[RMDB]
RNA sequence: GGGAACGACUCGAGUAGAGUCGAAAAAGCGGGAAAGGUGCCCGGUACGAAUCCUGGGGUCGUCGUUGUACUCGUGCGAGUAAUCCACGAUGCUACAAGGCGCUAAGCAAUGGAAGUGAAUCUUGAGGGAAGCAAUUCUGCAGAGACACUUCCACCCGAGUUACAUAAUGUUCGCAUUAUGUAACUCAAAAGAAACAACAACAACAAC
Reactivity to 2A3 in 0.01 (KOAc 150mM, MgCl2 10mM, bicine 150mM(pH8.5), 24C), signal-to-noise 8, nucleotides 027 to 156: a010g070c030g000g010g040a090a150a100g170g040u100g070c010c030c040g010g040u110a060c070g050a070a050u040c000c020u060g010g000g010g020u030c010g000u010c050g050u030u010g000u000a000c000u000c000g010u010g030c140g020a020g050u160a040a140u010c000c000a000c000g010a020u100g010c040u000a000c000a000a010g010g000c000g010c050u100a050a020g030c040a050a120u070g000g000a000a000g000u010g050a130a130u010c010u030u070g020a140g070g030g000a030a010g030c020a040a220u050u000c010u060g030c040a020g000a000g000a010c000a000c000u000u000c000c000a010c000c000c010
Reactivity to DMS in 0.01 (KOAc 150mM, MgCl2 10mM, bicine 150mM(pH8.5), 24C), signal-to-noise 4, nucleotides 027 to 156: a110g000c030g010g020g000a050a090a110g030g010u000g030c010c010c000g020g020u000a230c110g010a120a150u000c020c030u000g000g010g020g020u000c010g030u000c010g010u010u000g000u000a020c030u000c010g050u010g020c120g010a080g050u000a130a200u000c010c000a030c000g010a050u000g000c000u000a030c000a030a070g000g000c000g010c110u000a070a120g020c090a090a130u000g020g000a060a050g030u000g000a030a210u010c020u010u020g020a200g000g020g000a040a130g020c250a060a210u000u000c020u000g010c050a220g000a040g000a260c040a020c010u000u000c000c010a040c030c030c040

The data come from the RNA Mapping Database (RMDB), library ARCHII. The record gives the reactivity of an RNA of 207 nucleotides to 2A3 and DMS. The RNA was probed in 150 mM KOAc, 10 mM MgCl2 and 150 mM bicine (pH 8.5) at 24 C. For 2A3, 11,059 sequencing reads were counted. Values cover nucleotides 27 to 156. The DMS profile rests on 8,529 reads. 2A3 adducts were read by reverse transcription with SuperScript II with manganese. High 2A3 reactivity points to a flexible backbone, as in loops and unpaired stretches.